Annotation: Source: RMDB library OK2TST, as collected in RNAgym. Chemical mapping of a 177-nucleotide RNA with DMS and 2A3. The RNA was probed in 150 mM KOAc, 10 mM MgCl2 and 150 mM bicine (pH 8.5) at 24 C. As a SHAPE reagent, 2A3 marks flexible, mostly unpaired nucleotides at the ribose 2'-OH. For DMS, 1,912 sequencing reads were counted.
RNA sequence: GGGAACGACUCGAGUAGAGUCGAAAAAGCUGCAGAGGAAUCUCGUGAACAAAUUGAAGAUGCAAUCCAAGGUGCAGACAUGGUAUUUGUUACUUCUGGUAUGGGUGGCGGAACUGGUACUGGUGCACCCUCAAAUCGUAUUCGUACGAUUUGAGGGAAAAGAAACAACAACAACAAC
Reactivity to DMS in 0.01 (KOAc 150mM, MgCl2 10mM, bicine 150mM(pH8.5), 24C), signal-to-noise 2, nucleotides 027 to 126: a130g000c080u010g030c090a050g000a060g010g010a110a070u000c030u010c050g020u010g010a080a130c110a040a070a080u000u010g000a110a040g020a180u000g000c030a060a080u010c050c050a070a080g030g000u000g010c090a050g000a060c110a070u020g010g020u000a040u000u000u020g020u000u010a090c050u000u010c050u010g010g000u000a050u000g010g000g020u010g010g040c100g000g010a090a050c110u000g000g000u000a040c040u010g000g000u000g010c090a110
Reactivity to 2A3 in 0.01 (KOAc 150mM, MgCl2 10mM, bicine 150mM(pH8.5), 24C), signal-to-noise 2, nucleotides 027 to 126: a000g050c050u130g000c040a010g030a090g180g110a150a110u000c030u030c090g100u090g040a060a030c080a050a130a090u100u060g030a040a000g100a070u100g020c000a030a030u070c000c000a130a030g060g020u030g010c000a000g060a110c010a060u160g080g000u050a070u070u130u060g110u040u050a060c000u080u060c020u040g000g050u100a040u130g060g010g000u050g060g000c040g020g000a050a030c020u040g030g020u110a060c020u030g000g050u110g010c000a070